Record summary
The record gives the reactivity of an RNA of 177 nucleotides to DMS. For DMS the reverse transcriptase was MarathonRT. The reactions ran in a buffer of 150 mM KOAc, 10 mM MgCl2 and 150 mM bicine (pH 8.5), at 24 C. DMS (dimethyl sulfate) methylates the pairing face of unpaired adenines and cytosines. It was measured as part of the RMDB library OK2TRN. Reactivities are given for positions 27 through 126.
[RMDB]
RNA sequence: GGGAACGACUCGAGUAGAGUCGAAAAGUUGGAGGUGGACCAGCCGAGGGCGGUGGACAUGUCCUGCGGAUCGGCCGAUUUCGCCACGGCCAGAACGCCGGUGCCGAUGGUAGCGCCGACCAAGGUGUAAAAUCAUCGGGUUCGCCCGAUGAUUUUAAAAAGAAACAACAACAACAAC
Reactivity to DMS in 0.01 (KOAc 150mM, MgCl2 10mM, bicine 150mM(pH8.5), 24C), signal-to-noise 2, nucleotides 027 to 126: g020u010u000g000g000a170g020g000u000g010g010a090c040c050a080g020c040c010g020a200g000g030g010c100g000g020u000g010g010a080c050a110u020g010u020c020c000u000g030c050g010g010a170u000c040g010g010c020c010g010a200u000u000u000c100g000c090c030a070c030g000g010c000c050a070g000a060a180c100g010c040c030g000g030u000g040c030c020g000a050u000g030g020u000a090g030c060g000c000c000g000a040c090c050a080a200g000g000u000g010